[RMDB]
RNA sequence: GGGAACGACUCGAGUAGAGUCGAAAAGGGUCGCUUUUACCAACUUGAGGUGUUACACCCGCUGACGAACCAUCAGCUCACACCGUACCAACUUGAGAUGGCGCUGGAAUCUAUCUUGCAUUCCGAAAAUUAUGGGUGGUUUCGACCACCCAUAAUUAAAAGAAACAACAACAACAAC
Reactivity to DMS in 0.01 (KOAc 150mM, MgCl2 10mM, bicine 150mM(pH8.5), 24C), signal-to-noise 3, nucleotides 027 to 126: g010g020g030u010c070g000c050u000u010u010u000a150c040c030a060a110c110u010u010g000a090g000g010u000g000u000u000a050c100a110c090c100c080g010c030u010g010a030c060g010a080a130c130c110a220u000c040a040g000c030u020c100a070c090a030c080c060g010u000a070c060c040a060a080c060u000u000g010a070g000a080u010g000g000c100g000c060u020g010g010a060a050u000c070u000a070u010c070u000u010g010c100a090u010u000c000c000g020a060a070
Reactivity to 2A3 in 0.01 (KOAc 150mM, MgCl2 10mM, bicine 150mM(pH8.5), 24C), signal-to-noise 1, nucleotides 027 to 126: g000g000g060u070c010g020c090u060u090u030u130a090c020c030a060a060c040u060u100g050a020g000g030u010g020u000u020a050c060a060c020c000c010g020c050u040g010a020c040g060a060a060c030c000a040u010c020a000g010c000u000c030a110c010a020c000c040g020u080a000c000c040a010a080c020u080u070g020a040g000a110u060g020g020c060g050c110u080g000g030a040a010u010c000u030a130u090c070u180u070g000c000a040u040u000c000c000g000a110a120

An RNA of 177 nucleotides, treated with DMS and 2A3 and read out base by base. The data come from the RNA Mapping Database (RMDB), library OK2TST. The reactions ran in a buffer of 150 mM KOAc, 10 mM MgCl2 and 150 mM bicine (pH 8.5), at 24 C. For 2A3, 1,232 sequencing reads were counted. For 2A3 the reverse transcriptase was SuperScript II with manganese. For DMS, 2,858 sequencing reads were counted. For DMS the reverse transcriptase was MarathonRT.